[RMDB]
RNA sequence: GGGAACGACUCGAGUAGAGUCGAAAAGGACCCAGCUUCGGCUGGGUCCAAAGAGAUAGUACCUAUUGAGUUCCUGUGUAGGUACUCAUGACAGGAUGUGAAAAAGUAUGGACUUCGGUCCAUACAACUAUGAAGUUACGUUCGCGUAACUUCAUAGAAAAGAAACAACAACAACAAC
Reactivity to 2A3 in 0.01 (KOAc 150mM, MgCl2 10mM, bicine 150mM(pH8.5), 24C), signal-to-noise 3, nucleotides 027 to 126: g020g000a000c000c000c010a000g010c000u040u060c150g170g010c000u000g010g000g010u000c010c000a000a010a000g010a000g000a010u040a080g010u020a010c020c000u000a010u020u100g060a050g030u010u020c010c010u080g020u060g050u100a000g010g010u010a000c000u000c010a060u140g070a040c040a050g150g050a160u200g070u150g180a140a040a020a040a030g000u010a000u000g000g010a010c010u030u040c260g040g010u000c000c000a010u000a010c000a000a000
Reactivity to DMS in 0.01 (KOAc 150mM, MgCl2 10mM, bicine 150mM(pH8.5), 24C), signal-to-noise 5, nucleotides 027 to 126: g000g000a030c000c000c000a010g010c000u000u010c210g030g010c000u010g010g000g010u000c010c000a000a030a060g000a150g010a100u000a030g010u010a040c000c000u000a050u000u000g000a100g010u000u000c000c010u000g000u000g000u000a000g000g000u000a000c000u000c080a040u000g010a090c150a100g000g000a110u000g020u010g000a050a070a080a090a110g000u000a010u000g000g000a010c000u000u010c210g030g010u010c000c000a000u010a000c010a050a120
Structure probing data (2A3 and DMS) for a 177-nucleotide construct.